[RMDB]
Chemical mapping of a 207-nucleotide RNA with 2A3 and DMS. For 2A3, 3,029 sequencing reads were counted. For DMS the reverse transcriptase was MarathonRT. The reactions ran in a buffer of 150 mM KOAc, 10 mM MgCl2 and 150 mM bicine (pH 8.5), at 24 C. For DMS, 3,605 sequencing reads were counted. The data come from the RNA Mapping Database (RMDB), library M2RFPK. 2A3 adducts were read by reverse transcription with SuperScript II with manganese.
RNA sequence: GGGAACGACUCGAGUAGAGUCGAAAAGGCUAUGACUCGUGUCCGUCGGCGUAGCCGACAACAUGCCCAGGUAGCCCAGACCUUCAAGGCUACGGUGCGUUGCGACGCACGGUCUGAUUCUUCUCAAAGUAGUCCCGAGUCUUCGGACUCGGGACAAUCUUUACUUAUUGUUCGCAAUAAGUAAAGAAAAAGAAACAACAACAACAAC
Reactivity to 2A3 in 0.01 (KOAc 150mM, MgCl2 10mM, bicine 150mM(pH8.5), 24C), signal-to-noise 4, nucleotides 027 to 156: g010g000c040u040a040u200g080a070c000u000c000g010u020g000u030c040c060g010u000c000g000g000c270g170u180a060g030c000c000g030a000c010a040a040c030a080u180g020c010c010c010a030g020g020u000a000g000c000c030c120a050g010a000c000c000u010u010c010a010a000g000g000c000u010a010c000g000g000u010g000c020g000u000u070g070c170g120a000c010g010c000a000c020g000g000u010c000u000g010a030u100u050c030u120u020c070u040c090a150a170a040g060u130a060g000u060c000c020c000g000a000g010u010c020u060u130c230g080g000a000c000u000c000g000g010g000a000c000a000a000
Reactivity to DMS in 0.01 (KOAc 150mM, MgCl2 10mM, bicine 150mM(pH8.5), 24C), signal-to-noise 2, nucleotides 027 to 156: g000g030c010u000a050u000g000a080c000u000c020g020u000g020u000c050c080g020u000c000g020g010c030g040u000a100g010c000c030g020a070c000a090a040c050a100u010g020c010c020c030a050g030g000u000a030g020c010c010c170a100g030a110c030c040u000u010c110a070a300g000g010c000u010a030c000g050g000u000g000c010g020u010u000g020c150g040a120c050g020c010a000c030g020g000u010c010u010g010a220u000u000c050u000u010c050u010c050a090a080a210g020u000a170g030u000c000c000c030g000a070g030u010c000u000u000c300g070g000a030c000u010c010g000g010g000a000c000a010a010